The record gives the reactivity of an RNA of 207 nucleotides to DMS and 2A3.
For 2A3, 2,728 sequencing reads were counted.
Source: RMDB library OK3TST, as collected in RNAgym.
[RMDB]
RNA sequence: GGGAACGACUCGAGUAGAGUCGAAAACAAGAGGUAAGUGCAUCAACAUUAGAUGGAUUUAUGCCAGGUUUGCUGGAUCACAAAUCCAUGCAAAUGACCUAGGAGCACACCAAAUAAAACACAAUUUAAUGGGAUACACCUUUCACAAUGAUAAAAAAGGUAGUAAUCCUUUCGAGGAUUACUACCUAAAAGAAACAACAACAACAAC
Reactivity to DMS in 0.01 (KOAc 150mM, MgCl2 10mM, bicine 150mM(pH8.5), 24C), signal-to-noise 2, nucleotides 027 to 156: c080a060a150g010a140g000g000u000a010a050g040u010g040c030a090u000c010a090a160c020a050u010u010a090g050a070u000g010g010a120u000u000u000a040u020g010c020c030a040g020g030u000u010u020g020c040u000g010g020a020u000c080a080c200a040a080a100u000c010c000a010u000g040c020a050a040a090u010g030a080c010c100u000a170g010g010a240g020c010a020c040a080c040c040a040a110a190u000a100a050a090a180c060a080c040a050a090u010u010u010a030a070u010g010g000g000a110u000a080c060a030c020c020u000u000u000c040a100c040a040a130u000g020a180u010a000a010a040a090a060
Reactivity to 2A3 in 0.01 (KOAc 150mM, MgCl2 10mM, bicine 150mM(pH8.5), 24C), signal-to-noise 5, nucleotides 027 to 156: c050a020a040g040a040g110g020u100a080a120g030u020g020c020a110u030c020a040a130c020a050u020u030a060g000a040u020g030g010a020u010u040u060a040u120g020c000c010a020g030g040u090u200u210g090c000u020g000g010a040u150c030a020c030a150a030a000u000c000c010a000u090g020c040a000a000a080u040g050a030c020c080u100a120g010g110a040g040c010a010c000a020c050c000a030a090a020u150a020a070a060a010c110a010c030a050a090u090u190u180a100a070u050g020g000g010a020u070a100c070a050c030c020u030u120u070c070a050c020a120a190u140g040a060u240a050a130a000a040a030

The reactions ran in a buffer of 150 mM KOAc, 10 mM MgCl2 and 150 mM bicine (pH 8.5), at 24 C. DMS adducts were read by reverse transcription with MarathonRT.